[RMDB]
RNA sequence: GGGAACGACUCGAGUAGAGUCGAAAAUUCAAGCGAUUCUUCUGCCUCAGCCUCCCGAGUAGCUGGGAUUACAGGCACGCCACCAGGUCUGGCUGAUUUUUCUAUUUUUAGUAGAGAUGGGGUUUCACCAUGCUGGCCAGGUUGGUCUCGAACUCCAUGGUAAUACUAAUUUCGAUUAGUAUUACCAAAAAGAAACAACAACAACAAC
Reactivity to DMS in 0.01 (KOAc 150mM, MgCl2 10mM, bicine 150mM(pH8.5), 24C), signal-to-noise 1, nucleotides 027 to 156: u000u000c040a030a110g020c050g040a070u000u000c030u000u020c030u000g030c030c000u000c000a050g000c020c010u000c010c010c020g070a050g020u000a020g000c040u020g010g020g000a100u000u000a030c050a050g110g000c010a060c060g000c020c010a020c000c010a080g020g000u010c010u000g010g000c010u010g000a060u000u000u000u000u010c020u000a040u000u010u010u030u010a070g010u010a080g000a030g010a080u000g010g010g010g010u000u000u000c030a090c030c020a070u000g000c030u010g020g040c020c020a070g010g040u000u010g020g010u000c030u000c030g000a110a150c020u000c010c010a290
Reactivity to 2A3 in 0.01 (KOAc 150mM, MgCl2 10mM, bicine 150mM(pH8.5), 24C), signal-to-noise 1, nucleotides 027 to 156: u140u010c050a070a010g000c050g080a010u000u040c020u020u040c030u060g010c010c010u080c030a030g000c010c050u090c020c030c000g040a050g030u140a020g050c040u070g060g000g000a020u060u120a100c070a010g040g000c030a000c060g030c000c000a010c030c000a020g030g020u080c040u040g010g000c020u030g090a100u010u030u020u070u020c040u030a100u020u080u020u130u240a010g030u020a000g020a030g020a100u010g000g000g050g000u030u070u130c030a000c010c000a070u060g020c020u080g030g010c010c000a000g010g040u030u040g000g000u000c030u000c040g010a030a020c000u030c080c020a040